[RMDB]
RNA sequence: GGGAACGACUCGAGUAGAGUCGAAAAGAUAUGGAACAGUAUGGACAUGAUUAGUGUCGGAAACGACAUGGGAUCAACAGCCAUAACUGUUCCUAAGUCAAAAGUCAUGAUCUUCGGAUCAUGACAAGACGUUUACUCACUUCGGUGAGUAAACGUCAAAAGAAACAACAACAACAAC
Reactivity to 2A3 in 0.01 (KOAc 150mM, MgCl2 10mM, bicine 150mM(pH8.5), 24C), signal-to-noise 2, nucleotides 027 to 126: g020a000u050a010u120g000g000a000a000c000a020g020u000a000u010g010g060a050c140a300u260g000a010u020u010a030g030u020g030u010c000g030g060a030a040a010c020g030a000c000a020u070g130g300g090a000u000c050a060a290c110a250g040c000c010a000u050a150a020c000u000g000u000u000c000c000u000a030a010g010u000c030a070a010a010a130g040u010c010a010u000g000a010u000c010u010u160c300g080g020a030u000c000a020u000g010a000c010a000a010
Reactivity to DMS in 0.01 (KOAc 150mM, MgCl2 10mM, bicine 150mM(pH8.5), 24C), signal-to-noise 1, nucleotides 027 to 126: g020a020u000a180u010g010g000a000a000c000a010g000u000a030u000g010g010a020c200a160u010g000a030u000u020a300g000u000g000u000c010g000g030a030a000a020c000g030a010c010a000u010g000g020g010a010u000c000a060a080c250a140g030c000c000a000u010a070a050c010u000g000u010u000c000c000u000a010a040g000u000c010a050a040a100a180g000u000c000a000u000g000a000u030c010u030u000c300g030g010a010u000c000a010u000g010a000c010a040a040

An RNA of 177 nucleotides, treated with 2A3 and DMS and read out base by base. The reactions ran in a buffer of 150 mM KOAc, 10 mM MgCl2 and 150 mM bicine (pH 8.5), at 24 C. The DMS profile rests on 1,098 reads.